An RNA of 207 nucleotides, treated with DMS and 2A3 and read out base by base. Values cover nucleotides 27 to 156. The RNA was probed in 150 mM KOAc, 10 mM MgCl2 and 150 mM bicine (pH 8.5) at 24 C.
RNA sequence: GGGAACGACUCGAGUAGAGUCGAAAAGCUCUGUAAUGGGAUGGGAUCCGAAGCUCCAUUGAGGGAUAAUACAGGCUCUCCCAUCCAACUCCUAUUCCAACACGUCCUCGUCGUACAGAGUGGUAACUAAGGUAUAGCUCCUUCGGGAGCUAUACAAUCGAUCAUACUUCUUCGGAAGUAUGAUCGAAAAAGAAACAACAACAACAAC
Reactivity to DMS in 0.01 (KOAc 150mM, MgCl2 10mM, bicine 150mM(pH8.5), 24C), signal-to-noise 1, nucleotides 027 to 156: g010c020u010c000u000g060u000a060a130u000g060g060g010a000u020g010g010g000a060u000c030c050g000a160a060g050c080u010c020c080a250u000u000g010a150g000g000g000a090u000a040a160u010a180c080a250g110g000c100u000c040u000c010c000c000a130u010c000c010a020a030c010u010c050c020u010a070u000u000c060c040a000a120c100a100c010g000u020c010c050u000c110g000u000c040g000u010a030c050a040g000a070g040u000g000g000u010a040a090c070u000a120a100g000g020u020a000u000a000g010c010u000c010c010u010u010c250g020g030g020a010g010c000u000a000u000a000c000a040a060
Reactivity to 2A3 in 0.01 (KOAc 150mM, MgCl2 10mM, bicine 150mM(pH8.5), 24C), signal-to-noise 2, nucleotides 027 to 156: g010c000u000c000u010g040u040a140a110u190g130g030g010a000u000g000g000g000a050u220c030c010g030a080a020g060c010u010c000c020a150u070u210g020a210g040g010g020a030u070a200a020u150a160c130a050g000g000c020u000c000u000c010c010c000a000u000c000c000a000a000c000u030c000c020u060a090u050u040c070c050a080a050c050a040c050g050u070c010c030u070c010g120u060c020g010u020a010c000a010g000a030g000u070g000g060u070a090a050c030u070a140a050g100g000u000a000u000a000g010c000u000c000c000u020u030c080g040g010g010a000g080c000u000a000u000a000c010a000a000